[RMDB]
RNA sequence: GGGAACGACUCGAGUAGAGUCGAAAAAUCAGAGGGCGCUAUCAUGCAAACUACGAUUGUCUGCUCAUGCACAGAACCAACUACCGAUAACUAACAGUGCAUGAAGGUUAGUUAUUCCAUAUUAAUUAAAACUCGUAAUUCUUCGGAAUUACGAGAACUACUAAACACACUUCGGUGUGUUUAGUAGAAAAGAAACAACAACAACAAC
Reactivity to 2A3 in 0.01 (KOAc 150mM, MgCl2 10mM, bicine 150mM(pH8.5), 24C), signal-to-noise 8, nucleotides 027 to 156: a010u060c070a050g030a040g080g030g000c020g020c030u120a130u300c080a060u300g020c030a010a020a030c010u090a070c030g040a030u020u040g050u040c030u060g010c010u010c010a000u020g000c000a000c000a030g040a130a080c060c030a070a090c040u160a120c050c100g040a020u010a020a010c000u010a010a000c010a040g020u010g060c000a000u010g010a040a020g080g000u000u000a000g000u000u010a000u090u080c030c000a070u130a060u220u240a140a110u160u130a070a100a040a050c000u000c000g000u000a000a010u010u000c010u020u050c180g060g010a000a000u000u000a000c000g000a000g000a000a010
Reactivity to DMS in 0.01 (KOAc 150mM, MgCl2 10mM, bicine 150mM(pH8.5), 24C), signal-to-noise 2, nucleotides 027 to 156: a080u010c020a110g020a120g000g020g050c180g020c020u020a140u010c090a070u020g010c040a120a130a170c070u000a060c070g010a050u000u010g000u030c020u000g010c040u000c030a090u000g030c050a090c040a090g000a110a110c120c080a030a100c110u000a190c040c010g000a060u000a060a070c030u000a020a030c060a130g020u010g010c010a030u000g020a060a150g030g030u000u010a040g000u000u000a060u010u000c040c040a140u010a120u000u010a090a120u000u000a060a050a060a200c000u000c000g030u000a000a000u000u000c000u000u020c300g020g000a040a010u000u000a000c000g010a000g010a010a040

Source: RMDB library M2RFOK, as collected in RNAgym. This 207-nucleotide RNA was probed chemically with 2A3 and DMS. 2A3 adducts were read by reverse transcription with SuperScript II with manganese. For 2A3, 5,280 sequencing reads were counted.